[RMDB]
RNA sequence: GGGAACGACUCGAGUAGAGUCGAAAAAAAGAUAUGGAUGCAUUGUCAGGAUGACCAACCAAUGAUGCGGAUCGGAAACGAUCCGUUGAGGUUCCCUCAUCCUUGGAUUUAUGCAUCCUAAGUCAAAUCUUUCCUAUCUGUUCGCAGAUAGGAAAGAAAAAGAAACAACAACAACAAC
Reactivity to 2A3 in 0.01 (KOAc 150mM, MgCl2 10mM, bicine 150mM(pH8.5), 24C), signal-to-noise 2, nucleotides 027 to 126: a000a000a030g090a040u100a060u180g010g000a000u010g040c010a000u000u060g040u060c020a000g000g000a010u010g000a020c060c140a010a010c020c020a120a300u140g030a010u080g020c000g000g000a000u000c000g050g030a090a040a060c000g000a010u000c000c000g000u000u000g000a000g000g000u000u050c020c010c000u000c020a000u000c020c000u040u140g250g000a070u270u300u070a020u040g030c010a010u000c000c000u000a080a010g070u030c030a050a040a250
Reactivity to DMS in 0.01 (KOAc 150mM, MgCl2 10mM, bicine 150mM(pH8.5), 24C), signal-to-noise 3, nucleotides 027 to 126: a070a110a120g010a030u000a300u010g000g000a010u000g010c010a010u000u000g010u010c010a060g000g010a030u000g010a030c110c190a030a010c000c010a190a250u000g000a070u020g010c010g000g000a010u000c010g000g010a160a070a270c020g010a000u000c000c000g020u010u000g000a120g010g020u000u010c080c040c150u000c020a010u000c000c010u020u000g020g000a010u010u020u010a000u010g000c000a020u000c000c000u000a010a060g000u000c070a100a110a190